[RMDB]
The data come from the RNA Mapping Database (RMDB), library OK2TST. This 177-nucleotide RNA was probed chemically with DMS and 2A3. DMS (dimethyl sulfate) methylates the pairing face of unpaired adenines and cytosines. Reactivities are given for positions 27 through 126.
RNA sequence: GGGAACGACUCGAGUAGAGUCGAAAAGGCGGCCGUGGCAAGGGCCGCGGGCGUAAAGAGGCCUGACAUGGACGCCGAGGCCCUGGAGGCCACUCCGUAUGAGGCCAGGGAGGAACCACUGACGCGAACUUGAUCUACUAUUCGUAGUAGAUCAAGUAAAAGAAACAACAACAACAAC
Reactivity to DMS in 0.01 (KOAc 150mM, MgCl2 10mM, bicine 150mM(pH8.5), 24C), signal-to-noise 9, nucleotides 027 to 126: g010g020c010g000g010c030c060g040u000g010g020c070a150a140g010g000g020c010c010g010c030g000g010g020c100g010u000a050a100a110g010a120g010g010c010c010u010g010a100c070a060u010g010g000a050c030g010c030c010g000a140g000g010c000c010c020u000g000g000a140g010g010c040c060a090c030u000c020c100g010u000a080u010g010a090g000g000c020c030a080g000g000g010a090g000g000a090a110c050c020a070c080u010g010a080c110g000c090g010a090
Reactivity to 2A3 in 0.01 (KOAc 150mM, MgCl2 10mM, bicine 150mM(pH8.5), 24C), signal-to-noise 6, nucleotides 027 to 126: g070g000c010g010g000c020c030g010u020g020g040c120a110a100g060g040g010c000c010g010c020g000g060g000c040g080u160a090a090a040g130a050g010g030c000c030u030g030a030c020a070u080g040g000a000c020g010c020c010g010a050g000g010c000c000c010u030g080g040a090g070g010c010c000a040c010u020c010c020g050u080a100u200g070a030g020g020c000c020a010g010g010g000a060g010g020a020a010c020c010a040c070u070g040a030c050g020c040g090a050